[RMDB]
RNA sequence: GGGAACGACUCGAGUAGAGUCGAAAAAUCGCGCCUGGUCGGAACAUAACGACGGCGGGCCGGUGGGGAAUCAGGGGGCUACCGUAGGAUAGCGAUGAGACAGCCCCUCCGAUGGCACCAAGCGUCGCACACUGGCCAUACUUCGGUAUGGCCAGAAUCCAACUAUCUAAUUCGUUAGAUAGUUGGAAAAAGAAACAACAACAACAAC
Reactivity to 2A3 in 0.01 (KOAc 150mM, MgCl2 10mM, bicine 150mM(pH8.5), 24C), signal-to-noise 2, nucleotides 027 to 156: a000u020c020g000c000g010c030c020u100g050g020u050c020g060g060a130a100c070a150u200a090a020c060g030a010c010g060g070c030g030g000g000c030c010g000g000u050g020g010g010g020a060a110u130c040a110g020g010g040g020g010c010u030a050c010c000g080u060a060g020g070a050u150a050g040c010g060a070u050g050a050g030a020c030a030g000c010c010c000c000u010c010c000g020a050u080g040g010c030a040c120c000a090a010g040c010g030u020c020g040c000a050c020a020c070u000g000g010c010c000a000u000a010c010u000u000c120g040g000u000a000u000g000g010c000c020a000g000a000a000
Reactivity to DMS in 0.01 (KOAc 150mM, MgCl2 10mM, bicine 150mM(pH8.5), 24C), signal-to-noise 2, nucleotides 027 to 156: a080u000c050g020c020g010c010c010u000g040g020u000c020g030g020a160a300c070a120u010a070a090c010g030a080c040g000g020c040g010g000g030c010c020g010g040u010g010g030g010g010a170a090u040c040a080g000g020g020g020g010c000u000a020c020c010g020u010a090g010g000a120u000a080g000c060g020a170u000g010a190g010a130c060a100g000c010c010c000c000u000c030c010g000a090u010g030g010c030a080c000c000a060a160g030c080g010u000c020g000c030a090c090a190c000u030g010g000c000c000a010u000a000c000u000u000c280g030g010u000a010u000g000g010c000c000a000g010a010a070
Source: RMDB library M2RFPK, as collected in RNAgym. Chemical mapping of a 207-nucleotide RNA with 2A3 and DMS. 2A3 adducts were read by reverse transcription with SuperScript II with manganese. Reactivities are given for positions 27 through 156. The reactions ran in a buffer of 150 mM KOAc, 10 mM MgCl2 and 150 mM bicine (pH 8.5), at 24 C. Values are in units of 0.01, from 0 to 300, in steps of 10.